[RMDB]
RNA sequence: GGGAACGACUCGAGUAGAGUCGAAAAGAUAUGGAGGUGACUGGGAGGCUGUGUCGGAAACGACACCAGCCUUUGAUCAGUACCUCCUAAGUCAAAAGGCUUUUUAAGCUUCGGCUUAAAAAGCCAAGUUCCUACUAUACUUCGGUAUAGUAGGAACAAAAGAAACAACAACAACAAC
Reactivity to DMS in 0.01 (KOAc 150mM, MgCl2 10mM, bicine 150mM(pH8.5), 24C), signal-to-noise 3, nucleotides 027 to 126: g000a020u000a250u010g010g000a020g000g000u000g010a040c000u010g000g000g000a010g020g020c010u020g020u000g000u000c000g010g000a050a020a110c000g010a020c000a010c300c180a010g000c000c000u000u000u000g010a130u010c000a020g010u000a030c000c000u000c000c000u000a010a030g000u010c020a040a080a110a110g000g010c000u000u000u000u000u000a000a000g000c010u000u000c240g000g000c000u000u000a000a040a010a010a010g010c000c010a010a050
Reactivity to 2A3 in 0.01 (KOAc 150mM, MgCl2 10mM, bicine 150mM(pH8.5), 24C), signal-to-noise 1, nucleotides 027 to 126: g010a010u020a020u120g000g000a010g050g020u100g170a140c000u010g050g000g110a040g010g040c000u010g000u010g000u010c010g010g010a040a020a010c010g000a010c000a020c040c050a010g000c050c010u020u030u030g030a030u010c000a000g000u020a010c000c010u000c000c000u010a010a000g000u010c010a000a000a030a220g000g000c040u000u060u000u030u010a000a010g010c000u030u170c300g030g000c000u020u030a010a010a010a000a010g000c020c000a000a000